[RMDB]
RNA sequence: GGGAACGACUCGAGUAGAGUCGAAAAAACGCUGCGGUGGUCGCCCACUCGUGCAGGUAACUCACGAUGCUGGAACUUUGCGGCCCUAAGCACUGGAGAUGACCCUUGAGGGAGGUUUCACUCUGCAGUGAGUCCGAAUCUUCGGAUUCGGACUCACAAAAGAAACAACAACAACAAC
Reactivity to 2A3 in 0.01 (KOAc 150mM, MgCl2 10mM, bicine 150mM(pH8.5), 24C), signal-to-noise 1, nucleotides 027 to 126: a000a000c090g010c040u060g000c000g040g000u040g000g000u000c000g000c010c000c030a000c000u010c000g000u000g000c060a000g130g080u200a110a110c030u000c000a040c000g000a000u040g000c130u000g000g000a070a160c040u090u080u270g000c000g000g030c000c010c010u020a060a000g000c000a010c000u090g000g000a130g040a130u160g120a070c070c000c000u050u030g020a120g040g010g000a020g040g000u100u070u030c030a050c060u040c050u120g020c030a050